[RMDB]
RNA sequence: GGGAACGACUCGAGUAGAGUCGAAAAGAGUACCUAGACUAGACACAUGCAGUAGGUACUGCUAGAUGAUCCGUACGGAUCUCGUACUGGUACCAUGUCGACUAGUGGAUCAGUGCACUAGCUGAUCGUGACUGCCGAAAUUCGUUUCGGCAGUCACAAAAGAAACAACAACAACAAC
Reactivity to DMS in 0.01 (KOAc 150mM, MgCl2 10mM, bicine 150mM(pH8.5), 24C), signal-to-noise 3, nucleotides 027 to 126: g010a140g020u000a060c010c010u000a120g020a130c040u000a070g020a170c130a040c090a060u010g000c130a120g000u000a080g010g020u000a010c000u000g000c140u000a070g000a110u020g000a020u000c000c020g020u010a090c200g010g000a020u000c020u000c120g010u000a030c030u000g010g020u010a050c080c000a060u000g010u000c080g010a080c110u010a090g010u000g010g010a030u000c020a020g020u000g000c110a280c130u010a100g020c010u000g000a040u000c080
Reactivity to 2A3 in 0.01 (KOAc 150mM, MgCl2 10mM, bicine 150mM(pH8.5), 24C), signal-to-noise 2, nucleotides 027 to 126: g060a000g000u010a020c020c030u030a020g100a160c040u050a050g060a070c070a000c010a190u230g050c040a040g050u190a030g000g010u010a020c010u020g000c020u000a020g000a160u160g010a000u050c000c000g080u090a070c270g000g020a020u020c020u020c050g000u020a020c020u010g000g030u080a260c000c000a020u030g060u040c050g080a150c050u050a060g030u000g030g000a010u030c020a010g000u010g020c050a010c150u040a010g020c010u030g010a050u040c070